About this RNA:
Structure probing data (2A3) for a 177-nucleotide construct. The RNA was probed in 150 mM KOAc, 10 mM MgCl2 and 150 mM bicine (pH 8.5) at 24 C.
[RMDB]
RNA sequence: GGGAACGACUCGAGUAGAGUCGAAAAACAUCGGCUACGGCCGAUGACAUAAAGUAGAAAGCACUACUAAACCCCUCGCCACAGUGUAGUGUUUCCUACUUUAUGGAACGAUCGUUACGACGAUCGAGACUGCCGGUGUUUUCGAACACCGGCAGUCAAAAGAAACAACAACAACAAC
Reactivity to 2A3 in 0.01 (KOAc 150mM, MgCl2 10mM, bicine 150mM(pH8.5), 24C), signal-to-noise 2, nucleotides 027 to 126: a000c000a000u000c010g000g000c000u020a030c160g140g000c000c000g000a000u000g000a000c000a000u000a000a000a000g000u010a010g020a030a010a000g020c010a000c030u000a010c000u040a070a130a140c060c040c020c010u030c120g070c050c000a100c050a090g110u040g000u070a000g000u000g000u020u000u010c000c010u020a010c000u000u000u000a010u000g000g040a020a060c010g000a000u000c000g010u000u090a050c220g030a000c010g000a110u000c000g000a030
It was measured as part of the RMDB library RFM100.